[RMDB]
RNA sequence: GGGAACGACUCGAGUAGAGUCGAAAAAAACAUCCAGCAACUUUUUUGGUUGUAUAGUCAAAGGUGCUUGAGUCAUUGGCAUGUAAGAUAAAUAUACCUGCAUGUUAGUCUUAGGUUCUGAUAGAAAACAUCUUCAUGAUUUCGAUCAUGAAGAUGUAAAAGAAACAACAACAACAAC
Reactivity to 2A3 in 0.01 (KOAc 150mM, MgCl2 10mM, bicine 150mM(pH8.5), 24C), signal-to-noise 5, nucleotides 027 to 126: a000a000a000c060a030u050c020c000a010g040c020a010a010c010u110u140u090u050u220u300g060g010u020u000g040u060a150u150a100g090u100c090a050a020a030g020g000u010g000c000u010u020g000a010g000u040c040a100u050u110g010g000c000a000u000g020u040a130a090g020a050u100a080a210a000u250a030u090a130c010c010u000g000c000a000u010g010u010u020a020g010u000c000u000u030a020g010g000u030u000c000u020g100a100u080a190g110a030a050a000
Reactivity to DMS in 0.01 (KOAc 150mM, MgCl2 10mM, bicine 150mM(pH8.5), 24C), signal-to-noise 5, nucleotides 027 to 126: a050a040a050c080a070u010c020c020a180g020c060a030a020c040u000u010u040u030u000u030g000g010u010u000g010u010a100u010a100g010u010c080a040a100a130g000g000u000g000c000u000u000g000a020g000u010c110a060u000u000g000g010c000a010u000g010u000a030a040g010a040u020a060a090a100u020a110u030a060c100c020u000g000c010a020u000g010u000u020a020g010u000c010u000u000a020g000g010u000u000c020u000g000a060u020a130g010a070a020a070